This 177-nucleotide RNA was probed chemically with 2A3 and DMS.
The RNA was probed in 150 mM KOAc, 10 mM MgCl2 and 150 mM bicine (pH 8.5) at 24 C.
Source: RMDB libraries RFM100 and RFMREP, as collected in RNAgym.
RNA sequence: GGGAACGACUCGAGUAGAGUCGAAAAAGCAGGCACCACUACGGUGGUGCCUGCAGCCGGUGACGCGUAUUCUCGGGUUGAUAAUACAUACCUGAUGUUAUUGCUUGAGAAUACACGUAGCUGGUAACGUAUGAACGAUAUUCGUAUCGUUCAUACGAAAAGAAACAACAACAACAAC
Reactivity to 2A3 in 0.01 (KOAc 150mM, MgCl2 10mM, bicine 150mM(pH8.5), 24C), signal-to-noise 4, nucleotides 027 to 126: a000g020c010a000g000g000c000a020c000c030a000c030u050a050c300g140g000u000g010g000u010g000c000c000u000g010c000a000g000c000c000g020g010u040g020a000c000g000c000g000u000a010u000u010c000u000c000g010g000g020u100u300g090a010u010a030a020u040a020c080a050u170a190c010c130u200g090a300u040g030u000u010a010u010u010g000c000u000u010g000a000g000a010a000u010a010c000a010c010g000u000a050g000c000u000g010g000u050a090a020
Reactivity to DMS in 0.01 (KOAc 150mM, MgCl2 10mM, bicine 150mM(pH8.5), 24C), signal-to-noise 2, nucleotides 027 to 126: a090g030c000a040g030g030c000a040c030c010a020c000u000a130c170g060g000u000g040g060u010g020c000c000u020g010c020a000g000c000c000g020g000u000g000a040c000g000c030g010u000a000u000u000c030u000c000g010g010g020u030u030g020a000u000a020a000u010a030c060a100u010a110c250c220u010g010a100u000g010u000u000a000u000u010g010c000u000u010g000a000g010a020a010u000a000c010a020c000g040u000a140g010c020u010g000g020u010a040a090